Conditions: 150 mM KOAc, 10 mM MgCl2 and 150 mM bicine (pH 8.5), 24 C. An RNA of 177 nucleotides, treated with DMS and 2A3 and read out base by base. For 2A3 the reverse transcriptase was SuperScript II with manganese.
[RMDB]
RNA sequence: GGGAACGACUCGAGUAGAGUCGAAAACGGCCGGUGGCGACACAGGUUGAUGAUCUUCUUUCGGAGAUUCGUCAGCGAGCGGCAAUUAACGAACGCGUACUGGUCACCACACUGACCAAGCGGAUGAUCACCGUAGUCCAUUCGUGGACUACGGUGAAAAAGAAACAACAACAACAAC
Reactivity to DMS in 0.01 (KOAc 150mM, MgCl2 10mM, bicine 150mM(pH8.5), 24C), signal-to-noise 2, nucleotides 027 to 126: c140g000g000c000c020g030g020u020g010g010c090g000a080c030a070c060a100g000g000u020u000g030a010u010g000a010u000c030u000u000c010u010u000u010c190g000g000a030g000a010u010u000c020g020u000c000a030g020c010g020a140g010c020g010g020c060a140a070u010u010a060a170c180g020a150a140c050g010c010g010u000a190c190u000g000g000u000c000a050c040c060a080c130a080c240u000g010a020c010c020a040a140g000c070g000g020a070u000g030a170
Reactivity to 2A3 in 0.01 (KOAc 150mM, MgCl2 10mM, bicine 150mM(pH8.5), 24C), signal-to-noise 2, nucleotides 027 to 126: c020g070g030c020c000g110g010u030g010g000c030g040a010c010a000c020a220g040g050u010u000g000a020u000g000a010u010c010u010u030c000u000u300u140c160g010g030a000g000a040u230u090c000g000u000c020a010g010c040g160a010g070c000g000g080c040a040a080u200u100a090a060c150g020a060a020c020g030c010g020u000a070c080u020g000g030u030c000a000c040c020a040c010a010c050u140g020a010c000c020a020a000g050c040g030g080a100u080g000a050